RNA sequence: GGGAACGACUCGAGUAGAGUCGAAAAUAGAUGGUUCGCCAUCUACAACAACCUUUGUGCAAUUGUAUAUGAACUACCAGAGUGAGUCGCCCAUUGGGCGACCCUCUGGCAUAUACACAAAUUGCACUCUGGUCUCAAAGCCUGUUUCGACAGGCAACAGACCUACUUUCUUCGGAAAGUAGGUCUGAAAAGAAACAACAACAACAAC
Reactivity to 2A3 in 0.01 (KOAc 150mM, MgCl2 10mM, bicine 150mM(pH8.5), 24C), signal-to-noise 2, nucleotides 027 to 156: u130a020g020a010u030g000g020u100u060c230g020c040c000a000u000c000u020a030c050a230a080c010a010a040c020c020u010u000u000g000u000g000c000a020a010u010u070g020u000a000u000a000u010g020a110a120c040u050a090c250c010a000g000a010g030u100g030a130g010u050c000g060c010c030c170a260u240u300g010g000g000c000g000a000c000c010c000u020c010u000g000g000c000a000u000a000u000a000c010a000c010a040a070a030u000u020g010c000a010c000u000c000u000g040g010u010c010u020c100a090a150a010g010c000c000u000g070u000u140u070c130g140a030c000a020g000g000c010a000a000
Source information:
Structure probing data (2A3) for a 207-nucleotide construct. For 2A3, 1,049 sequencing reads were counted. Values cover nucleotides 27 to 156.